Structure probing data (DMS and 2A3) for a 177-nucleotide construct. The data come from the RNA Mapping Database (RMDB), library OK1LIB. The reactions ran in a buffer of 150 mM KOAc, 10 mM MgCl2 and 150 mM bicine (pH 8.5), at 24 C.
[RMDB]
RNA sequence: GGGAACGACUCGAGUAGAGUCGAAAAAUGGGAUUUAGAAAAGACUUUUUAUGGGGUGGCGCAACUGCAGCCAAUCAAUGCGAAGGCGGUUAUAACGAAGGUGGUCGUGGUUUAGCCAAUGUGGAUGCCAUGACCCUACGUUCGCGUAGGGUCAUGGAAAAGAAACAACAACAACAAC
Reactivity to DMS in 0.01 (KOAc 150mM, MgCl2 10mM, bicine 150mM(pH8.5), 24C), signal-to-noise 2, nucleotides 027 to 126: a010u050g020g000g000a150u010u030u000a080g000a020a040a100a130g000a100c040u000u000u030u080u050a080u090g030g000g020g000u000g010g060c110g030c060a150a040c160u050g000c030a110g000c010c030a100a050u020c250a090a090u020g060c080g010a180a090g000g020c020g000g020u020u000a130u010a010a050c130g010a120a100g010g000u000g000g070u000c000g000u000g000g000u000u060u070a050g020c040c020a030a030u000g040u000g040g000a300u000g030
Reactivity to 2A3 in 0.01 (KOAc 150mM, MgCl2 10mM, bicine 150mM(pH8.5), 24C), signal-to-noise 2, nucleotides 027 to 126: a000u030g000g010g050a020u070u110u150a140g110a060a190a020a030g170a170c060u220u170u090u100u090a190u110g100g000g020g000u060g000g000c030g000c020a080a070c020u050g000c000a010g000c000c140a010a020u130c010a040a040u070g100c010g080a020a020g030g070c100g040g020u150u040a090u040a170a090c170g010a050a010g000g090u100g010g040u060c030g040u010g040g010u000u040u110a000g010c000c060a000a040u150g010u050g010g010a000u110g010
For DMS the reverse transcriptase was MarathonRT.